Chemical mapping of a 207-nucleotide RNA with 2A3. The reactions ran in a buffer of 150 mM KOAc, 10 mM MgCl2 and 150 mM bicine (pH 8.5), at 24 C. It was measured as part of the RMDB library OK3TST. As a SHAPE reagent, 2A3 marks flexible, mostly unpaired nucleotides at the ribose 2'-OH.

RNA sequence: GGGAACGACUCGAGUAGAGUCGAAAAGCGUUACACUGUAUCGACGAAGAAUUGGGAAACAAGAAUUACAAGUACAGUAAACGGGGAAAACGAGAGUAUCAUAUUGAGAGCGACAUUGACACUGUGAAAUCUUUUAUAUACGAAAAUGUAAAUUGACGCUUGUCAAGAACUUCGGUUCUUGACAAGCAAAAGAAACAACAACAACAAC
Reactivity to 2A3 in 0.01 (KOAc 150mM, MgCl2 10mM, bicine 150mM(pH8.5), 24C), signal-to-noise 2, nucleotides 027 to 156: g040c030g040u060u040a010c110a010c010u030g000u150a020u150c040g100a040c040g060a100a080g010a060a070u120u080g000g060g000a070a160a000c050a050a070g040a110a130u100u060a030c030a150a000g080u030a030c040a010g010u040a040a040a040c020g000g000g030g040a020a020a000a100c050g010a010g000a000g130u080a100u110c030a090u070a070u090u150g010a050g000a000g120c030g010a000c020a030u030u080g070a040c000a000c060u030g000u000g040a070a020a060u010c000u000u070u090u100a140u030a030u060a130c030g030a130a030a030a050u150g000u110a200a090a060u220u140g020a010c170